This 177-nucleotide RNA was probed chemically with 2A3 and DMS. Reactivities are given for positions 27 through 126.
RNA sequence: GGGAACGACUCGAGUAGAGUCGAAAAGGCACGAGCGGGCAGAACCUGGAGGAUAUAGACCGCUACUCCACAGAGACUGAGCGGCUGCCUGUAUUGGAGCGCCUGCUGGAGUGGGGCCAUCUGGUGCGUUAAGCUCCAAAUUCGUUUGGAGCUUAACAAAAGAAACAACAACAACAAC
Reactivity to 2A3 in 0.01 (KOAc 150mM, MgCl2 10mM, bicine 150mM(pH8.5), 24C), signal-to-noise 3, nucleotides 027 to 126: g040g000c050a010c060g020a030g020c040g020g000g000c030a030g050a120a040c010c010u050g050g060a100g060g020a010u090a010u030a200g140a160c010c020g030c040u020a050c000u030c010c000a090c050a120g130a040g060a150c120u220g110a030g020c020g030g020c020u040g060c020c010u100g030u100a210u070u190g050g020a080g040c000g010c000c000u000g000c050u030g040g010a110g010u090g000g060g000g000c000c010a020u040c060u060g050g060u080g020c030
Reactivity to DMS in 0.01 (KOAc 150mM, MgCl2 10mM, bicine 150mM(pH8.5), 24C), signal-to-noise 5, nucleotides 027 to 126: g010g010c040a040c030g000a070g020c020g010g010g000c020a090g020a120a190c050c030u000g000g000a090g010g000a110u010a100u010a070g010a150c000c030g010c020u000a080c050u000c000c130a120c200a170g000a090g010a130c160u010g000a050g010c010g020g010c020u000g010c010c010u000g000u000a090u000u000g000g010a150g010c120g010c020c000u010g000c050u000g010g000a130g020u000g000g010g010g010c030c020a040u000c040u000g010g010u010g010c150